An RNA of 170 nucleotides, treated with 2A3 and DMS and read out base by base. DMS adducts were read by reverse transcription with MarathonRT. For 2A3, 8,122 sequencing reads were counted.

[RMDB]
RNA sequence: GGGAACGACUCGAGUAGAGUCGAAAAGGUUGCAUUCUUCCAUCUGAGUGCACUAUGUUUAGGGAUGCAGAGGGCCGUAUGACACCAUACUGCCAUGAUCCUACUGUUUUGCCUGGGGCUUUUGCGUUAACGGUCUUGUUCGCAAGACCGAAAAGAAACAACAACAACAAC
Reactivity to 2A3 in 0.01 (KOAc 150mM, MgCl2 10mM, bicine 150mM(pH8.5), 24C), signal-to-noise 5, nucleotides 027 to 129: g070g000u110u100g020c030a010u020u000c000u170u080c070c050a220u080c100u130g000a000g000u050g000c040a010c020u050a020u140g170u020u120u110a050g020g000g010a030u090g200c030a010g040a170g130g000g000c000c000g000u010a000u020g120a130c020a010c190c000a000u010a020c010u000g030c000c000a030u030g010a000u040c050c000u020a070c020u060g110u060u030u110u120g050c000c020u010g000g070g000g000c000u090u080u030u110g060c100g050u050u130a100a060
Reactivity to DMS in 0.01 (KOAc 150mM, MgCl2 10mM, bicine 150mM(pH8.5), 24C), signal-to-noise 4, nucleotides 027 to 129: g000g000u030u050g000c030a040u010u020c040u020u060c170c180a060u070c120u040g000a070g000u050g040c050a040c070u010a010u050g010u000u000u000a100g030g010g000a000u060g070c070a050g020a150g010g000g000c000c000g000u020a000u010g010a140c270a120c300c040a040u020a030c000u000g040c020c020a000u050g030a040u000c100c010u030a080c150u060g040u040u010u020u050g020c020c000u020g040g040g060g010c120u000u000u000u000g030c040g020u050u030a070a170